[RMDB]
RNA sequence: GGGAACGACUCGAGUAGAGUCGAAAACGUAGAGACGGUCAACCAUUCUACGAGCGGUUUCCCCUCUGCGCUUUUACAAAUCUAGAUAAGUUGAAGUUCAAAGAGGUCUGUAAAACUACUACUGGUAUGAUCUUACGGUUCGCCGUAAGAAAAAGAAACAACAACAACAAC
Reactivity to 2A3 in 0.01 (KOAc 150mM, MgCl2 10mM, bicine 150mM(pH8.5), 24C), signal-to-noise 7, nucleotides 027 to 129: c000g000u020a000g000a000g050a040c100g030g040u050c040a060a110c040c000a060u100u000c040u120a070c070g030a030g010c070g040g010u000u030u000c000c000c010c000u000c020u000g010c010g000c020u050u040u030u010a040c040a030a090a010u060c040u140a070g050a180u130a170a040g030u030u040g060a040a010g020u050u110c060a050a050a040g050a020g010g030u000c030u020g090u130a040a050a040a030c050u140a030c010u040a040c010u030g050g000u080a050u100g070a070
Reactivity to DMS in 0.01 (KOAc 150mM, MgCl2 10mM, bicine 150mM(pH8.5), 24C), signal-to-noise 9, nucleotides 027 to 129: c010g060u000a030g010a000g040a100c200g020g040u030c160a060a060c030c010a110u020u030c030u000a040c180g000a080g050c070g020g020u000u020u020c030c030c030c020u010c000u030g000c120g010c080u020u020u000u000a100c130a050a050a050u020c070u050a100g020a110u000a070a100g000u040u030g000a040a090g000u020u020c100a030a050a040g020a010g000g010u030c050u040g030u060a060a040a090a070c100u070a010c080u000a030c120u000g010g010u000a000u040g000a080

An RNA of 170 nucleotides, treated with 2A3 and DMS and read out base by base. The DMS profile rests on 40,526 reads. The RNA was probed in 150 mM KOAc, 10 mM MgCl2 and 150 mM bicine (pH 8.5) at 24 C. The 2A3 profile rests on 18,608 reads.